[RMDB]
RNA sequence: GGGAACGACUCGAGUAGAGUCGAAAACAGCGGCGACAACAUGAACCCUGUCUUCAUAUACUUGGUGCCGAAGCCCUGCCCCCGCGCGCGUAUCGUGCUCCCAGGUUUGUGCGCUCGGCCGGUACGCCCACGCUAUAGUGUUCGCACUAUAGCGUGGAAAAGAAACAACAACAACAAC
Reactivity to 2A3 in 0.01 (KOAc 150mM, MgCl2 10mM, bicine 150mM(pH8.5), 24C), signal-to-noise 2, nucleotides 027 to 126: c030a000g070c080g040g050c020g060a040c040a080a020c040a080u080g060a060a070c000c000c100u110g050u070c040u040u040c040a060u150a020u050a270c040u040u040g030g000u060g040c030c000g030a050a030g050c020c000c020u060g030c030c010c010c000c020g010c030g000c000g000c000g030u020a010u050c020g020u070g030c010u030c030c010c010a000g060g060u080u130u110g110u040g050c040g000c010u040c000g030g000c000c020g000g000u010a010c030g020c000
Reactivity to DMS in 0.01 (KOAc 150mM, MgCl2 10mM, bicine 150mM(pH8.5), 24C), signal-to-noise 2, nucleotides 027 to 126: c070a100g020c070g030g030c020g010a070c080a070a070c150a090u000g010a070a050c080c050c080u000g000u000c110u010u000c030a050u010a160u010a080c160u000u010g010g000u010g010c040c020g000a100a090g020c020c010c020u000g010c010c020c010c010c030g020c140g020c100g010c030g030u000a000u000c020g000u010g010c030u000c020c010c030a160g000g000u000u000u020g030u010g010c030g010c070u000c050g000g000c000c020g000g000u000a010c050g030c030
The record gives the reactivity of an RNA of 177 nucleotides to 2A3 and DMS. For DMS, 2,461 sequencing reads were counted. The reactions ran in a buffer of 150 mM KOAc, 10 mM MgCl2 and 150 mM bicine (pH 8.5), at 24 C. For DMS the reverse transcriptase was MarathonRT. Source: RMDB library OK2TRN, as collected in RNAgym.